An RNA of 177 nucleotides, treated with 2A3 and DMS and read out base by base. The reactions ran in a buffer of 150 mM KOAc, 10 mM MgCl2 and 150 mM bicine (pH 8.5), at 24 C. High 2A3 reactivity points to a flexible backbone, as in loops and unpaired stretches. The 2A3 profile rests on 4,020 reads. DMS adducts were read by reverse transcription with MarathonRT. The DMS profile rests on 2,846 reads. 2A3 adducts were read by reverse transcription with SuperScript II with manganese.
[RMDB]
RNA sequence: GGGAACGACUCGAGUAGAGUCGAAAACCUCGGAAAUGCCGAGCAGGCGCGCGGUGUUAGCGUGCAUGCCGAUCGCAUCGGUCAGCUCGCGCAGGGUCCAAGCUUCGAUCGGCUUGGUGAAAUAGUCGCCAUAUCUUAGGUUCGCCUAAGAUAUGGCAAAAGAAACAACAACAACAAC
Reactivity to 2A3 in 0.01 (KOAc 150mM, MgCl2 10mM, bicine 150mM(pH8.5), 24C), signal-to-noise 4, nucleotides 027 to 126: c010c000u030c060g040g060a130a120a040u040g000c000c000g000a010g010c030a030g040g100c010g000c000g000c020g000g210u150g120u300u200a030g000c000g000u000g020c030a040u120g000c010c000g000a020u050c100g020c120a090u030c020g020g010u080c090a030g000c000u020c010g000c040g010c030a020g040g040g020u000c000c010a000a010g010c010u150u170c110g240a270u050c030g000g000c000u010u000g020g040u040g030a050a070a020u200a040g100u110c060
Reactivity to DMS in 0.01 (KOAc 150mM, MgCl2 10mM, bicine 150mM(pH8.5), 24C), signal-to-noise 4, nucleotides 027 to 126: c020c000u010c110g000g010a040a110a120u010g010c000c000g000a010g000c010a130g020g030c020g010c000g000c000g020g010u010g010u010u020a100g000c000g010u000g010c030a180u010g000c040c010g010a020u000c250g030c050a300u000c030g010g010u000c080a180g020c000u000c030g000c160g010c010a030g000g000g000u000c000c020a010a020g010c010u010u000c140g010a060u000c200g000g000c000u000u000g000g030u010g000a040a060a110u010a130g000u000c120